[RMDB]
RNA sequence: GGGAACGACUCGAGUAGAGUCGAAAAGAUAUGGAAUGCUCUCGAGCGUACGCGAGGUUCGGAAACGAACCUCACGCUAAGACAGGAGGCAUUCCUAAGUCAAAAGGGUAUCCUUCGGGAUACCCAAGACUAAUGCACUCUUCGGAGUGCAUUAGUCAAAAGAAACAACAACAACAAC
Reactivity to 2A3 in 0.01 (KOAc 150mM, MgCl2 10mM, bicine 150mM(pH8.5), 24C), signal-to-noise 2, nucleotides 027 to 126: g020a000u000a030u090g000g030a040a000u010g000c030u040c010u030c300g130a130g190c220g160u230a070c030g020c030g070a000g010g020u000u000c010g000g000a040a010a000c020g000a000a000c000c000u010c000a000c000g000c030u070a130a070g250a130c100a040g150g000a020g010g010c000a000u000u000c000c000u010a000a000g020u020c000a000a040a080a080g010g000g000u010a010u030c020c000u050u100c300g140g040g010a010u000a010c000c000c000a000a010
Reactivity to DMS in 0.01 (KOAc 150mM, MgCl2 10mM, bicine 150mM(pH8.5), 24C), signal-to-noise 2, nucleotides 027 to 126: g000a000u000a080u000g000g020a020a000u000g000c000u020c000u000c030g000a140g070c090g000u010a020c040g010c030g010a020g000g010u000u000c000g020g000a030a020a080c000g010a000a020c000c000u010c010a010c000g010c160u010a100a080g010a080c190a210g010g000a020g000g010c000a010u020u000c000c000u000a010a040g000u000c030a060a100a110a080g000g000g000u000a000u000c000c000u000u020c160g020g030g020a020u000a010c010c000c000a010a010
This 177-nucleotide RNA was probed chemically with 2A3 and DMS. It was measured as part of the RMDB library TTRDEL.